[RMDB]
RNA sequence: GGGAACGACUCGAGUAGAGUCGAAAAAGGCAGUUCAUCAGAAUGUCAAAAUAAUAGAUACAGAUCGGCACAUCAUUGUCAUUAACCGAAAUCUUUGUACUAUCAUCCAAAGAGAAGGCUGGGCUACCCAUAUCCUGUACUUCGGUACAGGAUAUGGAAAAGAAACAACAACAACAAC
Reactivity to 2A3 in 0.01 (KOAc 150mM, MgCl2 10mM, bicine 150mM(pH8.5), 24C), signal-to-noise 3, nucleotides 027 to 126: a010g040g000c030a040g080u050u060c030a150u060c030a080g060a110a050u030g010u030c000a060a110a040a040u130a060a050u080a060g070a030u060a070c020a030g070a060u090c030g020g000c050a040c020a070u060c020a040u060u130g070u040c030a050u040u150a050a050c000c020g060a080a110a050u010c010u050u040u060g020u040a060c030u080a050u100c020a010u050c030c030a060a050a010g040a000g010a120a020g030g010c030u050g000g020g020c000u040a080c000
Reactivity to DMS in 0.01 (KOAc 150mM, MgCl2 10mM, bicine 150mM(pH8.5), 24C), signal-to-noise 3, nucleotides 027 to 126: a040g010g000c010a040g010u000u000c010a100u020c150a110g000a050a040u000g010u000c030a050a100a060a060u010a080a070u000a040g000a120u000a030c070a050g000a050u000c040g020g010c090a050c120a030u010c080a090u010u000g020u000c100a040u010u000a130a140c060c030g000a030a060a090u000c030u000u010u000g030u000a040c040u000a030u000c100a050u000c040c030a060a060a110g010a060g000a120a080g040g000c050u000g020g000g020c020u010a090c190
Structure probing data (2A3 and DMS) for a 177-nucleotide construct. The reactions ran in a buffer of 150 mM KOAc, 10 mM MgCl2 and 150 mM bicine (pH 8.5), at 24 C. It was measured as part of the RMDB library OK2TST. For DMS the reverse transcriptase was MarathonRT.